[RMDB]
RNA sequence: GGGAACGACUCGAGUAGAGUCGAAAAGCUAGUGCAUUAAUGCAGGGUGUUACUAUAAGUUCGAGGCUGCCAGAUGGCAUCUCCGGCCCUAUAGAUGACAUUAAUUUCAGUCCUCUACUUGGAUGCAAGUCGUAGUACAAUUCGUUGUACUACGACUAAAAGAAACAACAACAACAAC
Reactivity to 2A3 in 0.01 (KOAc 150mM, MgCl2 10mM, bicine 150mM(pH8.5), 24C), signal-to-noise 6, nucleotides 027 to 126: g070c050u090a050g120u030g030c010a030u060u160a250a070u200g010c020a030g030g050g000u030g010u050u030a040c010u020a020u020a100a030g010u020u040c020g010a020g010g020c040u010g010c000c010a260g100a300u300g050g000c000a020u000c010u000c010c010g020g000c000c000c020u010a020u020a020g110a070u020g010a020c010a000u070u100a130a100u030u090u040c040a060g040u080c000c020u000c010u010a050c020u030u030g070g010a020u070g050c040a050
Reactivity to DMS in 0.01 (KOAc 150mM, MgCl2 10mM, bicine 150mM(pH8.5), 24C), signal-to-noise 2, nucleotides 027 to 126: g020c110u000a090g010u000g000c010a040u010u010a070a100u010g020c050a070g000g000g000u010g010u000u000a060c020u000a030u000a030a060g010u000u000c030g010a070g000g010c050u000g000c060c040a270g020a110u000g020g000c010a020u000c010u000c040c020g000g000c090c020c040u000a030u000a030g000a100u000g010a010c010a020u000u010a080a110u000u000u010c090a110g010u010c170c010u000c030u010a030c040u000u000g010g010a080u000g010c140a080